[RMDB]
RNA sequence: GGGAACGACUCGAGUAGAGUCGAAAAUGUUCCAGCCGCGAUCGGCUGCGUGCCCUGGCUGAGUAGCGAGGCGGUCGCCGAGACGCUGCUCGCAUUGAGCGCCUUUUGCGUGGUGAUCGACAAGGGAGGCAUUGACUGUGUUCGCACAGUCAAUGCCAAAAGAAACAACAACAACAAC
Reactivity to 2A3 in 0.01 (KOAc 150mM, MgCl2 10mM, bicine 150mM(pH8.5), 24C), signal-to-noise 1, nucleotides 027 to 126: u170g000u060u020c030c000a040g050c050c000g000c070g130a110u140c030g070g000c000u040g000c130g000u040g060c040c010c010u020g080g030c000u080g070a030g110u200a000g000c000g040a100g110g000c040g000g040u180c040g020c020c000g050a090g020a020c040g030c000u000g000c000u000c000g000c060a080u070u220g070a030g030c000g020c000c010u150u300u130u160g000c000g000u040g040g000u160g030a120u040c010g030a140c050a070a090g100g030g000a070
Chemical mapping of a 177-nucleotide RNA with 2A3. Source: RMDB library OK1LIB, as collected in RNAgym. For 2A3, 645 sequencing reads were counted. Conditions: 150 mM KOAc, 10 mM MgCl2 and 150 mM bicine (pH 8.5), 24 C. Values cover nucleotides 27 to 126.